[RMDB]
RNA sequence: GGGAACGACUCGAGUAGAGUCGAAAACACAAGGUUCGCCUUGUGAAAAACCGUAGGUGUUGAUGACCACGACCUCAAUGACGUUCUUUCGAAAGAGAGAAUAAGACAGAGGCCGUGCAAGACACCUAAACGGAAAAAACGAGGGUUCGCCCUCGAACAAUAUGCCUUACUUCGGUAAGGCAUAUUGAAAAGAAACAACAACAACAAC
Reactivity to DMS in 0.01 (KOAc 150mM, MgCl2 10mM, bicine 150mM(pH8.5), 24C), signal-to-noise 2, nucleotides 027 to 156: c010a000c010a000a010g010g030u000u000c300g030c030c000u000u000g030u000g000a030a050a090a090a080c010c000g020u000a020g030g020u000g010u000u000g000a090u010g020a140c300c000a020c000g010a010c010c000u010c000a250a140u020g000a130c110g000u000u000c000u000u010u000c010g010a150a150a300g000a020g030a000g000a070a010u000a040a150g010a190c040a060g010a020g000g030c000c030g000u000g010c020a050a190g000a050c000a010c000c010u000a000a030a100c020g000g010a000a050a060a130a110a070c030g010a050g030g000g020u000u000c070g010c010c000c000u000c000g000a030a180
Reactivity to 2A3 in 0.01 (KOAc 150mM, MgCl2 10mM, bicine 150mM(pH8.5), 24C), signal-to-noise 4, nucleotides 027 to 156: c000a000c000a010a000g030g010u070u110c140g130c050c000u000u010g010u000g030a120a000a010a020a000c020c020g030u020a010g000g020u020g020u000u050g060a260u120g020a060c090c000a000c010g010a030c010c000u020c010a130a300u120g030a030c060g030u000u000c010u000u010u010c020g060a110a120a050g000a000g000a000g000a000a010u080a090a030g040a030c030a030g070a000g000g000c010c000g000u010g010c010a020a100g000a000c000a000c000c000u020a050a060a010c010g020g010a040a070a000a110a000a010c020g010a010g020g000g000u080u110c190g230c000c010c000u000c000g000a020a000